An RNA of 207 nucleotides, treated with 2A3 and DMS and read out base by base. The reactions ran in a buffer of 150 mM KOAc, 10 mM MgCl2 and 150 mM bicine (pH 8.5), at 24 C.

RNA sequence: GGGAACGACUCGAGUAGAGUCGAAAAGUGGUGCGCGGAGAGGGUAACCACCGGCGCGCGUCACUGAUAUAUCCACCGGGGGGUAAGAGGAGAAAAGGAUACAGCGCGACGAAGUUAGCACGCUGCCGAAAUGUACCCACAUUCGUGUGGGUACAAAACCUUACUUAAACUUCGGUUUAAGUAAGGUAAAAGAAACAACAACAACAAC
Reactivity to 2A3 in 0.01 (KOAc 150mM, MgCl2 10mM, bicine 150mM(pH8.5), 24C), signal-to-noise 2, nucleotides 027 to 156: g020u010g010g020u010g000c010g020c030g100g100a200g030a110g110g000g040u130a060a080c030c030a020c010c010g030g030c010g010c010g000c010g000u000c000a000c000u000g000a000u010a050u040a050u060c040c050a070c110c080g000g000g000g000g000g000u030a070a000g010a040g070g010a010g060a050a040a040a010g010g000a050u090a080c060a010g010c020g010c000g080a140c000g040a070a030g060u050u050a010g020c030a010c060g050c020u040g010c020c000g020a050a040a080u050g000u020a000c010c050c000a000c000a020u030u050c220g050u020g000u010g020g000g000u000a010c000a000a000a010
Reactivity to DMS in 0.01 (KOAc 150mM, MgCl2 10mM, bicine 150mM(pH8.5), 24C), signal-to-noise 2, nucleotides 027 to 156: g030u000g020g020u000g000c000g020c040g040g000a140g000a170g000g030g000u000a070a150c130c070a110c050c000g000g000c040g020c000g010c030g020u000c010a020c000u010g010a100u000a080u010a060u000c020c000a110c000c070g030g010g020g030g030g040u000a070a070g020a110g040g010a170g020a040a070a090a120g000g000a190u000a090c010a020g040c090g030c010g000a190c050g030a090a130g010u000u010a160g020c050a030c060g020c020u030g040c010c080g010a050a080a080u010g000u000a020c000c000c000a000c000a080u010u000c280g040u010g030u000g010g000g000u000a000c000a000a020a040